Background: Chemical mapping of a 177-nucleotide RNA with 2A3 and DMS. Reactivities are given for positions 27 through 126. For DMS the reverse transcriptase was MarathonRT. Conditions: 150 mM KOAc, 10 mM MgCl2 and 150 mM bicine (pH 8.5), 24 C. Source: RMDB libraries RFM100 and RFMREP, as collected in RNAgym.
[RMDB]
RNA sequence: GGGAACGACUCGAGUAGAGUCGAAAAGAAAGAAAGGUUCAGUGGGCGCACUCAUCGAAAGAUGAGGGCGCGAAGCCGAAUGUCCUCCGGGUUGGACAACCCAAGGACAGCUUAGGUUGCCACCCAAUAUUACCGAUGAUUUCGAUCAUCGGUAAUAAAAAGAAACAACAACAACAAC
Reactivity to 2A3 in 0.01 (KOAc 150mM, MgCl2 10mM, bicine 150mM(pH8.5), 24C), signal-to-noise 5, nucleotides 027 to 126: g070a010a070a020g130a040a090a020g090g000u090u120c080a020g010u130g020g140g000c000g000c000a010c000u000c000a000u000c000g060a100a040a030g010a000u000g000a000g010g000g000c000g000c010g000a000a000g020c000c000g020a030a020u030g010u040c000c000u030c070c130g000g000g030u070u080g160g060a110c110a050a010c000c000c000a000a000g000g020a150c020a020g000c050u050u060a020g000g020u030u050g020c010c000a030c020c010c000a030a050
Reactivity to DMS in 0.01 (KOAc 150mM, MgCl2 10mM, bicine 150mM(pH8.5), 24C), signal-to-noise 5, nucleotides 027 to 126: g010a090a060a100g020a090a110a090g010g020u000u000c030a070g020u010g000g030g010c000g020c000a020c000u020c000a000u000c010g000a110a090a160g000a000u000g000a000g000g000g010c010g000c000g000a100a110g010c000c030g010a020a040u000g000u000c010c000u010c210c180g000g010g000u000u000g020g010a110c130a020a010c000c000c000a190a020g000g000a050c120a040g000c070u000u010a060g000g020u000u000g000c030c020a100c010c030c010a100a140